[RMDB]
This 207-nucleotide RNA was probed chemically with 2A3. Source: RMDB library OK3TST, as collected in RNAgym. The 2A3 profile rests on 434 reads.
RNA sequence: GGGAACGACUCGAGUAGAGUCGAAAAACUGGGAAUGAAAUACUGCAAUUUGUGGUAAAUACACUGAUGGGAGACGAUCCAGAGCCGCCUGAGCCACCUUUUGAUCCUCCUACGCUUCAUGAAUUAUAUGAUUUAGAGGUAGACGGACCGGAGGACCCGUACCAUGGUGGUUCGCCACCAUGGUACGAAAAGAAACAACAACAACAAC
Reactivity to 2A3 in 0.01 (KOAc 150mM, MgCl2 10mM, bicine 150mM(pH8.5), 24C), signal-to-noise 1, nucleotides 027 to 156: a000c030u090g020g000g050a080a070u070g110a160a040a120u080a070c020u020g020c000a000a260u050u140u170g000u010g000g050u110a030a030a030u230a060c070a030c060u120g030a050u020g060g050g000a050g020a050c060g010a000u050c070c010a000g020a000g140c010c060g000c000c000u020g020a010g110c030c010a000c010c010u010u050u040u180g070a120u000c000c000u000c000c000u010a010c030g020c040u050u060c010a060u010g090a070a000u060u090a190u120a110u300g030a060u060u040u050a040g010a040g060g000u020a050g060a070c000g010g020a020c010c040g020g000a000g050g020a020c020c010